[RMDB]
RNA sequence: GGGAACGACUCGAGUAGAGUCGAAAAACACAAAUCUAUCCAUGCAAGCAUUUACCGCUGGUGAACCGGCGGUUUUUUUUGCCUGCCAUCCAGACAAAAGCGGCCCCUUGCGCAACGAUGCAGCAAGAUUGUCUAACCUUUUCGAAGGUUAGACAAUAAAAGAAACAACAACAACAAC
Reactivity to DMS in 0.01 (KOAc 150mM, MgCl2 10mM, bicine 150mM(pH8.5), 24C), signal-to-noise 3, nucleotides 027 to 126: a070c050a070c120a030a080a070u020c050u010a080u010c070c050a070u010g010c040a050a060g010c060a040u010u020u000a030c010c000g020c010u000g010g020u010g020a130a140c050c000g000g030c000g010g000u010u000u000u000u000u010u000u000g000c010c030u000g010c030c080a070u010c070c060a050g000a050c080a050a040a080a090g020c040g000g010c010c020c010c000u000u000g000c020g000c020a050a060c150g010a060u020g020c000a080g030c100a040a050g000
Reactivity to 2A3 in 0.01 (KOAc 150mM, MgCl2 10mM, bicine 150mM(pH8.5), 24C), signal-to-noise 3, nucleotides 027 to 126: a000c050a000c070a020a110a040u070c040u110a080u040c020c010a010u100g020c020a020a030g000c020a040u030u050u080a040c020c000g020c000u010g030g050u250g160a210a190c000c010g000g000c000g000g000u000u000u000u000u000u000u040u020g010c000c020u010g010c000c010a010u010c020c000a010g100a150c040a040a140a030a020g050c040g010g030c010c010c000c000u010u020g030c000g000c010a000a060c110g090a120u070g000c010a010g020c000a050a050g030

Notes: This 177-nucleotide RNA was probed chemically with DMS and 2A3. DMS adducts were read by reverse transcription with MarathonRT. The data come from the RNA Mapping Database (RMDB), libraries RFM100 and RFMREP. The reactions ran in a buffer of 150 mM KOAc, 10 mM MgCl2 and 150 mM bicine (pH 8.5), at 24 C. For 2A3 the reverse transcriptase was SuperScript II with manganese.